Background: The record gives the reactivity of an RNA of 207 nucleotides to 2A3 and DMS. Reactivities are given for positions 27 through 156. For DMS, 3,389 sequencing reads were counted.

RNA sequence: GGGAACGACUCGAGUAGAGUCGAAAAUCGAGUUCUGGCUAUCCACUUUCAAAGUCAUCGUCAUGAUCGGUCUGAUCAUCUUGCUGUUUGUGAUCAUGCUUGGUGGUGGCCCAACCCACGACCGUUUGGGUUUCAGAUUCUACGACCAUCCAGGUGCGUUACAUCAUGCUUUCGAGCAUGAUGUAACAAAAGAAACAACAACAACAAC
Reactivity to 2A3 in 0.01 (KOAc 150mM, MgCl2 10mM, bicine 150mM(pH8.5), 24C), signal-to-noise 3, nucleotides 027 to 156: u040c010g010a010g030u070u040c040u070g020g000c010u040a070u170c040c010a040c040u140u200u170c200a130a070a040g070u130c020a030u030c030g080u020c000a020u050g040a010u040c010g000g090u030c050u060g070a180u130c060a090u050c090u070u090g010c020u040g000u050u080u020g020u020g010a030u040c010a010u040g020c010u010u040g020g000u000g000g000u020g020g010c010c000c000a020a030c000c010c010a030c070g150a130c040c060g070u080u100u070g000g000g000u020u030u070c020a010g000a060u090u040c020u080a090c020g050a030c010c010a020u050c020c030a050g060g020u080g050c010
Reactivity to DMS in 0.01 (KOAc 150mM, MgCl2 10mM, bicine 150mM(pH8.5), 24C), signal-to-noise 1, nucleotides 027 to 156: u010c050g000a110g000u000u000c020u010g030g020c020u000a110u010c020c070a020c060u010u020u000c130a030a060a060g000u000c030a030u000c080g020u000c000a070u010g010a060u000c000g010g030u000c050u010g000a120u000c090a120u080c040u010u000g030c020u000g020u010u000u000g080u000g000a040u000c080a020u000g000c030u000u010g040g020u000g010g050u000g020g010c010c060c130a100a090c010c000c020a070c060g010a060c050c090g000u000u000u000g040g020g000u010u000u000c080a120g010a100u000u000c090u050a060c050g000a070c010c000a100u000c010c030a060g000g040u000g020c150
The 2A3 profile rests on 2,960 reads. Reactivities are rounded to 0.1 and cut off at 0 and 3. The reactions ran in a buffer of 150 mM KOAc, 10 mM MgCl2 and 150 mM bicine (pH 8.5), at 24 C.